[RMDB]
RNA sequence: GGGAACGACUCGAGUAGAGUCGAAAACGUACCAUGGCGCGCGCUGCGCCGGAUCCAGCGUACGAUCUGUAGGAUCAGCGCUAGUACUGCGCGGUACUGAUGACGAUCUGCAUCAGCGCGUACUAGGUGACAUCCUCUGAUUCGUCAGAGGAUGUCAAAAAGAAACAACAACAACAAC
Reactivity to DMS in 0.01 (KOAc 150mM, MgCl2 10mM, bicine 150mM(pH8.5), 24C), signal-to-noise 5, nucleotides 027 to 126: c110g010u010a180c020c030a160u010g010g010c020g010c050g000c100g020c080u000g000c060g010c020c030g000g010a060u000c050c080a050g000c050g010u000a100c140g000a020u000c030u010g020u010a110g010g000a040u000c000a230g010c090g020c000u000a010g000u000a030c020u020g030c060g020c050g010g000u010a050c090u000g010a040u010g000a120c160g000a080u000c030u000g000c040a040u000c000a040g020c000g010c010g020u000a050c010u000a080g010g020
Reactivity to 2A3 in 0.01 (KOAc 150mM, MgCl2 10mM, bicine 150mM(pH8.5), 24C), signal-to-noise 4, nucleotides 027 to 126: c010g050u070a050c000c050a150u100g020g000c010g000c010g010c010g000c060u060g000c000g020c000c000g000g010a010u030c030c010a000g020c020g100u090a100c120g020a060u020c020u120g250u270a090g220g000a010u030c010a020g010c030g010c050u000a010g010u000a020c040u150g040c040g030c060g060g060u060a070c040u050g040a040u040g050a070c100g090a220u070c080u200g000c020a020u020c010a020g010c000g000c000g010u020a090c020u000a030g080g020
Structure probing data (DMS and 2A3) for a 177-nucleotide construct. Source: RMDB library OK2TRN, as collected in RNAgym. DMS adducts were read by reverse transcription with MarathonRT. The reactions ran in a buffer of 150 mM KOAc, 10 mM MgCl2 and 150 mM bicine (pH 8.5), at 24 C. 2A3 adducts were read by reverse transcription with SuperScript II with manganese.